RNA sequence: GGGAACGACUCGAGUAGAGUCGAAAAAGAUCGAUUACGAUCGAUCAAUGAUGCCCCUCACCCACGUCUGAAGAUCCCAGGUGGGCGAGGGAACGGAGCACGGGAUCACGAGCAGUACGCUGCUCGAAAAAGAACUAGACCUUCGGGUCUAGUUCAACAUAUUUAGCGUGUUCGCACGCUAAAUAUGAAAAGAAACAACAACAACAAC
Reactivity to DMS in 0.01 (KOAc 150mM, MgCl2 10mM, bicine 150mM(pH8.5), 24C), signal-to-noise 2, nucleotides 027 to 156: a090g000a000u000c010g000a040u000u020a090c300g040a050u010c000g040a010u010c010a260a050u020g000a110u010g010c090c000c000c020u000c020a090c010c010c000a020c130g010u000c060u000g000a060a090g010a080u000c010c030c000a280g080g070u000g000g000g050c050g000a060g030g000g000a000a020c010g050g030a110g010c130a090c090g000g010g020a020u000c020a270c040g000a010g000c000a030g020u000a100c300g070c020u010g020c000u000c010g010a000a040a030a110a060g020a020a060c000u000a000g000a030c000c030u000u020c300g040g000g030u000c000u010a000g010u020u000c000a040a220
Reactivity to 2A3 in 0.01 (KOAc 150mM, MgCl2 10mM, bicine 150mM(pH8.5), 24C), signal-to-noise 4, nucleotides 027 to 156: a000g000a000u010c020g000a000u060u090a120c170g060a030u010c010g010a000u000c020a010a080u170g090a070u200g050c010c000c010c000u000c010a030c000c010c000a010c010g110u040c070u080g050a070a020g010a050u020c000c000c010a010g010g010u000g000g000g000c010g000a000g010g000g020a040a030c110g060g090a100g080c140a070c150g010g010g000a010u030c030a000c030g000a000g000c000a000g010u070a020c250g040c110u000g000c000u000c000g010a000a000a000a000a000g000a000a000c000u000a000g000a000c000c000u010u100c230g060g000g000u010c000u000a000g000u000u000c000a000a000